[RMDB]
The record gives the reactivity of an RNA of 177 nucleotides to 2A3 and DMS. The DMS profile rests on 1,245 reads. Conditions: 150 mM KOAc, 10 mM MgCl2 and 150 mM bicine (pH 8.5), 24 C.
RNA sequence: GGGAACGACUCGAGUAGAGUCGAAAAGGGGCCUGUAUCUUCUUCACCCUCCUCAAUAUCGUGAGCGUGGAAUCCUCGGGCAAGGCACAGGUGAUCAUGGUGGGAGGACUCCUCGCGAUCCUCGCCGCGUUUGUAUGCUCUUCGGAGCAUACAAACGAAAAGAAACAACAACAACAAC
Reactivity to 2A3 in 0.01 (KOAc 150mM, MgCl2 10mM, bicine 150mM(pH8.5), 24C), signal-to-noise 2, nucleotides 027 to 126: g000g000g030g000c000c020u040g050u070a120u020c070u100u010c020u070u110c070a060c040c010c000u010c000c040u120c080a080a180u130a140u240c110g070u080g080a040g020c020g040u030g010g010a030a040u000c000c010u020c040g000g050g030c080a050a080g000g070c030a000c010a060g100g020u050g120a080u110c050a080u060g090g020u110g020g040g000a010g040g000a010c000u000c000c000u040c040g000c050g030a000u010c020c020u000c020g090c050c020g110
Reactivity to DMS in 0.01 (KOAc 150mM, MgCl2 10mM, bicine 150mM(pH8.5), 24C), signal-to-noise 2, nucleotides 027 to 126: g000g000g000g020c060c020u000g030u040a030u010c070u000u000c050u000u000c070a210c010c010c010u010c020c010u040c100a030a110u010a090u000c120g000u000g020a110g000c130g050u010g010g000a090a070u010c000c010u000c050g010g000g020c110a090a080g010g000c080a040c060a070g000g000u010g020a080u010c090a130u020g000g010u000g020g010g000a010g000g010a020c060u000c030c000u020c080g000c040g010a080u000c020c030u000c050g000c140c070g030